[RMDB]
The data come from the RNA Mapping Database (RMDB), library ARCHII. The record gives the reactivity of an RNA of 207 nucleotides to 2A3. For 2A3, 990 sequencing reads were counted. Values cover nucleotides 27 to 156.
RNA sequence: GGGAACGACUCGAGUAGAGUCGAAAAGGUCUGAUUGUGGGAUGGCCUGAGGCUGGGAUCUACUGUGUAGCGGACUAGCUCAUGUUGACGGAACGUCCGCACUAAGCUUGCCAUCAAUAUGGGUGCCAUGGAGGAGUCCGUGGCAUUCAGGUUGGCUGAUAAUCAGAACCUUCGGGUUCUGAUUAUCAAAAGAAACAACAACAACAAC
Reactivity to 2A3 in 0.01 (KOAc 150mM, MgCl2 10mM, bicine 150mM(pH8.5), 24C), signal-to-noise 2, nucleotides 027 to 156: g020g020u040c030u090g070a200u160u110g000u100g030g050g030a070u120g010g010c010c040u030g020a050g020g040c060u020g030g010g010a080u040c040u140a090c050u040g070u100g040u110a030g020c010g010g000a010c010u030a030g090c020u080c080a140u180g080u120u160g060a100c060g010g040a170a060c070g000u000c000c010g020c000a020c010u010a000a050g060c050u020u070g000c060c000a040u070c000a060a060u110a080u160g000g000g000u000g000c000c010a020u010g000g010a030g090g020a100g110u000c000c000g010u010g000g000c000a000u000u020c000a000g000g040u000u000g010g000c060u010